Source: RMDB library RFM100, as collected in RNAgym. The record gives the reactivity of an RNA of 177 nucleotides to 2A3 and DMS. The reactions ran in a buffer of 150 mM KOAc, 10 mM MgCl2 and 150 mM bicine (pH 8.5), at 24 C. 2A3 is a SHAPE reagent: it acylates the 2'-hydroxyl of flexible nucleotides of all four kinds. 2A3 adducts were read by reverse transcription with SuperScript II with manganese.
RNA sequence: GGGAACGACUCGAGUAGAGUCGAAAAGUAGGUCAGUAUGCCCCGAAUGUGCUGGGCGACACGCGGGCUACAAUGGCCGAGACAGUGGGAUGCAACGCCGAAAGGCGACGCUAAUCUCCGAAACUCGCUCCACAAGAGCGUUCGCGCUCUUGUGGAGAAAAGAAACAACAACAACAAC
Reactivity to 2A3 in 0.01 (KOAc 150mM, MgCl2 10mM, bicine 150mM(pH8.5), 24C), signal-to-noise 3, nucleotides 027 to 126: g150u150a040g010g010u000c040a000g000u030a050u290g010c020c010c000c010g120a160a130u220g000u000g030c060u150g030g190g010c050g020a010c000a000c000g030c080g000g000g030c000u000a010c010a070a200u120g000g010c000c000g000a000g010a000c050a010g060u280g030g000g000a000u000g000c010a060a000c000g000c000c000g010a020a050a030g020g000c000g000a000c050g000c000u050a030a010u000c040u000c000c000g030a030a070a060c050u060c030g040
Reactivity to DMS in 0.01 (KOAc 150mM, MgCl2 10mM, bicine 150mM(pH8.5), 24C), signal-to-noise 1, nucleotides 027 to 126: g000u040a090g000g000u000c000a000g030u000a010u040g020c120c000c120c010g010a140a030u060g060u000g010c020u000g020g000g000c000g000a120c030a000c100g050c030g000g000g020c000u000a010c060a100a100u000g000g000c000c000g070a100g010a120c190a000g000u060g000g000g000a050u000g020c030a050a200c000g000c030c000g000a050a160a150g000g000c000g000a000c300g000c000u030a050a070u000c000u040c000c130g000a080a040a030c020u050c060g000